[RMDB]
This 177-nucleotide RNA was probed chemically with DMS and 2A3.
Reactivities are rounded to 0.1 and cut off at 0 and 3.
RNA sequence: GGGAACGACUCGAGUAGAGUCGAAAAGAUAUGGACCCUUGGAUUUAGCGGGAGUCCAUCGGAAACGAUCGGACGUUGAUCGCUUGUCAGGGUCCUAAGUCAAAAGUAUCUCCUUCGGGAGAUACAACUCAUAAGGUAACUUCGGUUACCUUAUGAGAAAAGAAACAACAACAACAAC
Reactivity to DMS in 0.01 (KOAc 150mM, MgCl2 10mM, bicine 150mM(pH8.5), 24C), signal-to-noise 6, nucleotides 027 to 126: g000a050u000a300u010g010g010a030c000c000c000u000u010g020g010a030u000u020u000a020g020c000g010g000g010a030g010u000c000c010a020u000c000g000g000a100a110a180c000g010a010u000c210g040g000a020c000g010u000u010g000a040u000c010g000c010u000u010g000u000c010a030g000g000g010u010c000c000u000a020a050g000u000c050a080a080a100a130g000u000a010u000c000u000c000c000u000u000c190g020g000g010a020g000a000u000a000c000a060a120
Reactivity to 2A3 in 0.01 (KOAc 150mM, MgCl2 10mM, bicine 150mM(pH8.5), 24C), signal-to-noise 5, nucleotides 027 to 126: g020a010u090a030u140g000g010a020c000c010c040u040u220g260g000a120u300u300u200a010g010c020g010g000g000a010g010u010c000c010a000u000c000g020g030a060a040a040c010g000a010u090c290g010g000a000c040g090u120u030g020a020u010c000g000c000u000u010g000u010c010a000g000g000g010u010c000c000u000a030a010g030u010c010a000a000a020a140g000u000a000u000c000u010c020c000u020u100c300g100g000g000a000g000a000u000a000c000a000a010
For 2A3 the reverse transcriptase was SuperScript II with manganese.